[RMDB]
RNA sequence: GGGAACGACUCGAGUAGAGUCGAAAACGCGCGGCCGGCGGCGUGAUCACUACGACGAAGGAGUAUCCGGGCCUACCGACCGGCGAGUUGGCCGGCAGGGUGGCGGCGCGCGACUGCAACGUGUCGAAACAUAAGCCAUGUUCGCAUGGCUUAUGUUAAAAGAAACAACAACAACAAC
Reactivity to DMS in 0.01 (KOAc 150mM, MgCl2 10mM, bicine 150mM(pH8.5), 24C), signal-to-noise 5, nucleotides 027 to 126: c040g010c020g010c030g000g000c010c010g020g010c060g010g000c020g010u010g000a090u010c160a130c110u000a050c040g000a060c110g020a100a100g010g000a090g020u000a120u010c030c020g000g000g000c020c010u000a130c030c000g000a170c010c010g010g010c020g020a150g030u010u010g020g000c010c010g010g010c150a100g000g010g020u000g020g010c000g000g010c010g020c020g010c020g000a060c060u010g010c050a070a070c070g000u000g000u010c030g010a160
Reactivity to 2A3 in 0.01 (KOAc 150mM, MgCl2 10mM, bicine 150mM(pH8.5), 24C), signal-to-noise 3, nucleotides 027 to 126: c020g010c000g000c020g160g040c020c030g040g020c000g030g080c010g050u080g010a060u120c140a020c120u110a020c050g170a020c110g130a160a050g040g050a040g030u050a040u040c020c010g010g050g030c000c010u060a100c000c010g190a140c000c000g000g010c020g020a080g170u200u200g170g000c000c000g020g010c050a050g070g000g040u040g020g030c000g050g020c000g000c000g030c010g020a010c000u120g000c000a100a060c060g050u060g030u100c010g000a050
This 177-nucleotide RNA was probed chemically with DMS and 2A3. Source: RMDB library OK2TRN, as collected in RNAgym. Conditions: 150 mM KOAc, 10 mM MgCl2 and 150 mM bicine (pH 8.5), 24 C. Values cover nucleotides 27 to 126. The DMS profile rests on 7,832 reads. For 2A3 the reverse transcriptase was SuperScript II with manganese.